This 177-nucleotide RNA was probed chemically with DMS and 2A3. The data come from the RNA Mapping Database (RMDB), library OK2TST. For 2A3, 2,314 sequencing reads were counted.
[RMDB]
RNA sequence: GGGAACGACUCGAGUAGAGUCGAAAACAACUGAAAAAAUAAAACUGGGGCCUUGGCCAGGCACAGUGGCUCAGGCCUAUAAUCCCAGCACUUUGGGAAGCUGAGGUGGGAGGAUCACUUGAGGUCACCCUUCCUAAGUAUUCGUACUUAGGAAGGGAAAAGAAACAACAACAACAAC
Reactivity to DMS in 0.01 (KOAc 150mM, MgCl2 10mM, bicine 150mM(pH8.5), 24C), signal-to-noise 3, nucleotides 027 to 126: c050a110a160c100u010g000a000a040a130a110a100a070u010a030a030a080a070c130u010g000g000g020g010c030c040u000u000g000g010c040c020a040g010g000c120a060c140a090g010u010g020g010c010u000c300a030g010g010c020c020u010a020u000a050a080u000c020c000c000a160g030c090a050c120u000u000u000g020g000g010a070a040g010c060u000g010a020g000g010u000g000g000g010a080g000g000a040u000c080a030c120u000u000g000a060g000g010u000c090a110
Reactivity to 2A3 in 0.01 (KOAc 150mM, MgCl2 10mM, bicine 150mM(pH8.5), 24C), signal-to-noise 2, nucleotides 027 to 126: c010a000a030c070u180g040a070a040a030a020a080a160u150a090a130a020a040c080u120g060g040g060g040c000c010u000u020g020g000c020c030a000g010g030c080a020c020a130g120u030g010g000c010u030c020a000g000g000c020c010u000a000u010a000a010u000c020c010c000a010g030c070a040c080u090u130u080g040g010g010a070a020g010c010u050g010a010g040g030u050g020g050g020a060g000g000a030u030c040a020c070u070u070g050a020g050g030u050c010a060